[RMDB]
Background: An RNA of 177 nucleotides, treated with DMS and 2A3 and read out base by base. Values cover nucleotides 27 to 126. For DMS, 2,810 sequencing reads were counted. Source: RMDB library OK1LIB, as collected in RNAgym. The RNA was probed in 150 mM KOAc, 10 mM MgCl2 and 150 mM bicine (pH 8.5) at 24 C.
RNA sequence: GGGAACGACUCGAGUAGAGUCGAAAAGAGCGUCGAGAGACGAAGAGAAGUGCACCGAUCAGCAACGGAGAACGUAAUGGUGCACAAGAGUAAGUCAGUGAAACGUUCUCCGGGCACUGGAGGCAGACGUGCUAUAUGGCUUCGGCCAUAUAGCACGAAAAGAAACAACAACAACAAC
Reactivity to DMS in 0.01 (KOAc 150mM, MgCl2 10mM, bicine 150mM(pH8.5), 24C), signal-to-noise 2, nucleotides 027 to 126: g000a090g040c020g000u000c000g020a240g050a240g060a010c080g010a040a080g000a060g010a110a120g000u000g000c000a060c000c030g030a100u050c120a090g010c130a030a130c060g000g000a000g000a000a040c010g020u010a050a010u030g030g030u010g030c000a020c000a040a040g000a120g000u060a010a120g060u020c080a080g000u010g020a070a100a030c000g000u000u000c000u000c000c000g000g010g000c030a150c060u020g010g000a050g000g010c070a050g000a280
Reactivity to 2A3 in 0.01 (KOAc 150mM, MgCl2 10mM, bicine 150mM(pH8.5), 24C), signal-to-noise 3, nucleotides 027 to 126: g090a000g030c000g010u010c020g020a010g000a000g000a080c100g020a110a020g110a000g010a270a030g000u000g000c000a020c000c040g040a200u120c090a050g090c010a040a120c000g010g000a010g000a020a000c000g030u030a050a120u170g000g000u010g000c000a000c000a020a010g070a030g080u120a170a000g080u050c050a100g020u020g210a190a110a000c000g000u020u000c010u040c000c020g000g000g000c050a020c020u050g070g020a040g000g050c040a010g010a070